[RMDB]
This 207-nucleotide RNA was probed chemically with DMS and 2A3. Source: RMDB library OK3TST, as collected in RNAgym. Values are in units of 0.01, from 0 to 300, in steps of 10. For DMS the reverse transcriptase was MarathonRT.
RNA sequence: GGGAACGACUCGAGUAGAGUCGAAAAGGCCGCUGACCGUAAGCGAUAUGCCCUAGAAUCGGAAAAUUAUAAUCAUACGCAUAAUCGUAAAUUCCUUGAUUUAAUAACAGAAGCCUAUACCGGCUACAGCACUAGAUGGGUUGUAGCGAAUGUAGCAUCUUAAUUUAGAGUUCGCUCUAAAUUAAGAAAAAGAAACAACAACAACAAC
Reactivity to DMS in 0.01 (KOAc 150mM, MgCl2 10mM, bicine 150mM(pH8.5), 24C), signal-to-noise 2, nucleotides 027 to 156: g000g050c020c000g050c040u000g010a110c070c010g000u000a120a140g000c020g020a150u000a100u000g060c010c010c130u000a250g010a060a090u010c050g030g040a080a070a060a120u030u000a060u010a060a090u020c040a140u000a120c170g010c140a090u010a040a080u000c030g030u000a060a060a140u000u000c010c020u020u030g010a030u000u000u000a050a130u000a070a130c050a140g000a110a210g000c060c030u000a070u000a100c080c010g030g010c030u000a020c010a020g020c010a030c030u010a080g010a140u010g030g020g020u000u000g000u000a040g010c000g030a080a080u000g010u000a030g000c060a160
Reactivity to 2A3 in 0.01 (KOAc 150mM, MgCl2 10mM, bicine 150mM(pH8.5), 24C), signal-to-noise 2, nucleotides 027 to 156: g030g030c030c010g030c050u010g060a140c000c060g090u100a050a030g010c010g010a010u020a050u140g070c010c000c000u060a080g120a030a060u120c020g000g060a030a040a100a040u170u140a150u130a180a070u110c030a080u060a140c030g020c050a070u050a150a060u210c020g040u070a140a030a000u070u060c020c000u010u070g060a100u070u150u070a180a120u080a060a060c100a080g140a150a010g030c030c020u060a070u070a140c060c050g090g010c000u010a000c000a000g010c000a010c070u080a080g040a300u160g090g020g000u030u000g000u010a000g000c020g010a030a030u150g010u050a020g010c010a020